[RMDB]
RNA sequence: GGGAACGACUCGAGUAGAGUCGAAAAAUGUCUAUUGAAAAGGAAAGCCUCUGUGAAGAAAUCGAAAGGGAUGAAGAGGACGACACGUUGCCGUAAAUAACGGAAUUGAGUCAACUGUGGGGAAUGGGCACCCUAAUAGUUUCGACUAUUAGGGUGCAAAAGAAACAACAACAACAAC
Reactivity to DMS in 0.01 (KOAc 150mM, MgCl2 10mM, bicine 150mM(pH8.5), 24C), signal-to-noise 2, nucleotides 027 to 126: a110u000g010u010c020u000a130u000u010g010a030a070a100a090g000g000a100a190a200g000c040c030u010c010u000g020u000g020a140a140g000a050a120a090u010c050g000a040a050a100g000g010g030a030u010g000a110a050g000a030g000g040a090c060g000a040c050a060c060g010u000u000g010c000c000g030u000a060a040a080u000a030a040c050g040g000a060a040u010u010g010a060g010u000c030a060a090c110u000g020u020g010g000g000g010a080a090u000g010g000
Reactivity to 2A3 in 0.01 (KOAc 150mM, MgCl2 10mM, bicine 150mM(pH8.5), 24C), signal-to-noise 1, nucleotides 027 to 126: a000u110g020u000c010u040a100u070u230g050a090a100a010a060g050g040a100a060a010g050c000c030u000c070u010g000u050g040a100a260g010a030a090a010u080c000g080a170a060a020g090g070g010a040u110g010a120a020g050a050g000g030a040c000g000a000c000a000c040g050u010u050g050c000c000g050u050a140a190a050u120a220a020c010g000g000a020a020u100u070g060a010g030u030c020a000a070c070u120g000u070g040g000g040g010a000a030u020g080g030

Source: RMDB library OK2TST, as collected in RNAgym. Structure probing data (DMS and 2A3) for a 177-nucleotide construct. The 2A3 profile rests on 666 reads. DMS adducts were read by reverse transcription with MarathonRT. Conditions: 150 mM KOAc, 10 mM MgCl2 and 150 mM bicine (pH 8.5), 24 C. For 2A3 the reverse transcriptase was SuperScript II with manganese.